[RMDB]
An RNA of 177 nucleotides, treated with 2A3 and DMS and read out base by base. It was measured as part of the RMDB library OK2TST. For 2A3 the reverse transcriptase was SuperScript II with manganese. Values cover nucleotides 27 to 126. For DMS, 2,407 sequencing reads were counted. The 2A3 profile rests on 1,722 reads.
RNA sequence: GGGAACGACUCGAGUAGAGUCGAAAACGCAGGUGAUGAAGAUGACCCAGAGCUGCCUCAUCACGACGGAAAAAGUGCAGGUCAUCCAUUACGGCAGCAAUGGUUCGACGAAAGAAAAAGGCGAUUAUCGUGCCUAAUAGUUCGCUAUUAGGCACGAAAAAGAAACAACAACAACAAC
Reactivity to 2A3 in 0.01 (KOAc 150mM, MgCl2 10mM, bicine 150mM(pH8.5), 24C), signal-to-noise 1, nucleotides 027 to 126: c070g040c030a030g150g000u010g000a030u010g030a070a070g050a020u010g020a000c000c000c030a030g040a020g030c000u010g050c010c000u030c010a070u070c040a000c090g150a050c050g020g080a040a010a050a000a100g130u070g050c030a040g000g070u040c000a000u000c020c000a030u100u110a030c070g000g010c000a000g000c000a020a060u110g000g000u090u050c040g020a030c040g100a070a010a080g070a030a100a010a000a000g080g000c010g010a000u070u090a070
Reactivity to DMS in 0.01 (KOAc 150mM, MgCl2 10mM, bicine 150mM(pH8.5), 24C), signal-to-noise 3, nucleotides 027 to 126: c120g020c080a100g010g020u010g000a030u000g000a060a170g020a060u010g010a030c010c010c100a090g000a170g010c010u000g000c000c000u000c060a070u000c050a050c100g000a090c170g020g000a060a050a060a060a040g010u000g010c180a110g000g000u000c030a040u010c010c010a070u010u000a050c120g000g000c050a020g030c040a100a070u010g010g020u000u000c100g020a080c050g010a060a080a090g010a050a030a050a080a080g000g000c020g000a100u010u000a110